[RMDB]
RNA sequence: GGGAACGACUCGAGUAGAGUCGAAAACACUAUGUAUGCCUUCAGGGUGGCAAAAGCUUUCAGUAUUUGUAAAUUCAGUGAAAAACACAUCCGGUCUAGCUGCUUCACUUACAACGUGUCGAAAGACCCGCAACUCCUUCUUCGGAAGGAGUUGCGGAAAAGAAACAACAACAACAAC
Reactivity to 2A3 in 0.01 (KOAc 150mM, MgCl2 10mM, bicine 150mM(pH8.5), 24C), signal-to-noise 1, nucleotides 027 to 126: c070a010c010u040a020u040g090u020a000u110g170c000c000u000u050c010a060g070g000g130u000g010g000c000a000a070a070a060g170c040u120u290u000c030a070g030u090a280u140u070u080g140u180a110a110a210u080u240c160a200g000u000g130a040a080a030a030a030c080a000c000a000u060c000c030g000g000u010c020u070a000g000c000u000g000c000u000u060c000a030c000u000u010a000c000a000a010c000g000u000g000u000c000g050a120a000a000g010a020c000
An RNA of 177 nucleotides, treated with 2A3 and read out base by base. Conditions: 150 mM KOAc, 10 mM MgCl2 and 150 mM bicine (pH 8.5), 24 C. Values cover nucleotides 27 to 126. For 2A3 the reverse transcriptase was SuperScript II with manganese. Reactivities are rounded to 0.1 and cut off at 0 and 3.